RNA sequence: GGGAACGACUCGAGUAGAGUCGAAAAGAUAUGGACAGUUACCAGCUUUGAUCUCGUGUCGGAAACGACACGAGGGGAGCUGAACUGUCCUAAGUCAGCCUGGAUCUGAGUUCGCUCAGAUCCAGAACUAGUAUUCUCCCUUCGGGGAGAAUACUAGAAAAGAAACAACAACAACAAC
Reactivity to 2A3 in 0.01 (KOAc 150mM, MgCl2 10mM, bicine 150mM(pH8.5), 24C), signal-to-noise 2, nucleotides 027 to 126: g000a000u010a010u050g010g000a000c000a020g030u020u100a190c300c010a010g010c020u300u300u050g000a020u020c000u010c020g000u010g000u000c000g000g000a010a010a000c020g000a000c000a000c020g000a010g000g000g060g100a000g000c000u000g000a010a000c010u000g030u020c000c000u010a010a000g000u000c010a000g070c000c010u000g000g000a010u020c000u000g030a000g040u060u200c290g150c130u000c010a010g000a000u000c000c000a000g000a010a010
Reactivity to DMS in 0.01 (KOAc 150mM, MgCl2 10mM, bicine 150mM(pH8.5), 24C), signal-to-noise 3, nucleotides 027 to 126: g000a010u000a030u010g010g000a020c010a020g000u010u010a140c300c020a010g000c000u010u000u030g000a030u000c000u000c000g000u000g030u010c010g020g020a000a020a010c000g030a000c000a000c000g000a020g000g000g010g030a010g010c000u000g000a040a000c000u000g020u000c000c000u000a000a040g000u000c000a210g000c180c000u000g000g010a000u000c000u000g000a020g020u010u020c280g000c000u000c000a010g000a000u000c000c000a000g000a050a100